[RMDB]
RNA sequence: GGGAACGACUCGAGUAGAGUCGAAAAUAUUAUAGCGCACUAAAGACGCUGAUCUUUAGUUACCAAGGAACUUUAGUGCUGAGGUCCGAGUUCCAAGGUCCCAUGUCGGACGUUAGCACUAAUUGAAUUCAAAGAAGCGAUUCGUCGCUUCUUUGAAAAAAGAAACAACAACAACAAC
Reactivity to DMS in 0.01 (KOAc 150mM, MgCl2 10mM, bicine 150mM(pH8.5), 24C), signal-to-noise 1, nucleotides 027 to 126: u000a040u000u000a150u000a140g040c130g000c270a050c010u000a010a020a020g000a050c020g030c180u000g000a070u000c000u000u000u000a020g010u000u000a060c070c080a140a140g000g020a090a070c050u010u000u010a010g010u010g000c020u000g010a020g010g000u000c010c010g010a050g010u000u000c250c100a030a030g020g000u020c020c000c010a150u010g020u000c000g000g010a020c000g030u000u000a010g010c010a010c010u000a010a000u010u020g000a060a150